[RMDB]
RNA sequence: GGGAACGACUCGAGUAGAGUCGAAAAGAAAGUGGCGGACGGGUCAGUAACAGGAUCGAACGUACCCCGAGGUGGGGGAUAGCGGUGGGAAACUGCCGGUAAUACCUCAUGAUCUCUCCGGAGCAAACAUAGAGACAAGGUUCGCCUUGUCUCUAUGAAAAGAAACAACAACAACAAC
Reactivity to 2A3 in 0.01 (KOAc 150mM, MgCl2 10mM, bicine 150mM(pH8.5), 24C), signal-to-noise 1, nucleotides 027 to 126: g080a010a130a020g070u090g030g080c060g010g020a010c020g040g000g030u070c020a030g080u080a070a060c020a120g060g050a030u060c020g060a040a010c040g010u120a100c040c000c000c000g000a070g090g000u070g010g000g030g000g020a010u020a000g040c000g010g000u040g020g010g000a030a040a070c020u030g020c000c010g030g000u040a050a020u060a110c000c000u020c000a050u090g140a150u020c000u010c020u000c050c070g090g000a050g010c050a050a110a000
Reactivity to DMS in 0.01 (KOAc 150mM, MgCl2 10mM, bicine 150mM(pH8.5), 24C), signal-to-noise 3, nucleotides 027 to 126: g010a080a090a140g030u000g020g010c090g010g010a110c100g000g000g020u010c010a070g010u000a120a120c160a100g000g000a040u010c050g020a060a090c070g010u000a110c020c010c030c070g000a120g010g020u000g000g010g010g000g010a130u000a040g010c000g000g000u000g000g000g010a080a060a150c030u000g000c000c000g010g020u000a080a060u010a220c010c010u000c030a060u010g020a090u000c010u000c110u010c070c070g010g010a080g010c210a050a090a190

An RNA of 177 nucleotides, treated with 2A3 and DMS and read out base by base.
2A3 adducts were read by reverse transcription with SuperScript II with manganese.
Reactivities are rounded to 0.1 and cut off at 0 and 3.
The reactions ran in a buffer of 150 mM KOAc, 10 mM MgCl2 and 150 mM bicine (pH 8.5), at 24 C.
It was measured as part of the RMDB library RFMREP.